This 177-nucleotide RNA was probed chemically with DMS and 2A3. DMS adducts were read by reverse transcription with MarathonRT. 2A3 adducts were read by reverse transcription with SuperScript II with manganese. The reactions ran in a buffer of 150 mM KOAc, 10 mM MgCl2 and 150 mM bicine (pH 8.5), at 24 C.
RNA sequence: GGGAACGACUCGAGUAGAGUCGAAAAUCGUUCCCACCUAAUUUCGCAAUUUAUUGUCCUUGACUUCUACCACGAGAAAAAAAUUAAGAAAAUGCAACGCUGCCCGUGCAGGGUUUUCUGAGCGGGAUCAAAAGAGAUUGUUCGCAAUCUCUUUUGAAAAAGAAACAACAACAACAAC
Reactivity to DMS in 0.01 (KOAc 150mM, MgCl2 10mM, bicine 150mM(pH8.5), 24C), signal-to-noise 1, nucleotides 027 to 126: u000c010g000u000u000c000c010c000a190c210c140u010a040a050u010u020u000c040g010c150a070a080u000u000u000a080u040u010g000u010c030c060u000u010g020a020c010u000u010c010u000a050c040c020a120c070g010a100g030a030a030a020a180a100a050a070u010u010a100a170g010a060a040a070a040u000g010c040a040a070c090g010c100u000g000c000c010c010g030u000g010c000a010g000g010g000u010u020u000u010c040u010g000a140g020c020g000g010g010a210
Reactivity to 2A3 in 0.01 (KOAc 150mM, MgCl2 10mM, bicine 150mM(pH8.5), 24C), signal-to-noise 1, nucleotides 027 to 126: u000c000g010u000u030c050c000c000a030c030c000u090a070a120u000u100u070c070g030c040a020a010u100u030u080a100u070u240g080u000c000c060u030u030g030a070c000u040u040c020u050a040c000c040a080c070g030a050g080a150a010a000a020a020a070a150u150u140a050a020g060a140a080a020a020u080g010c020a040a080c010g040c010u050g040c000c010c000g030u020g000c000a010g050g000g100u070u080u200u000c020u000g010a020g000c010g000g050g040a050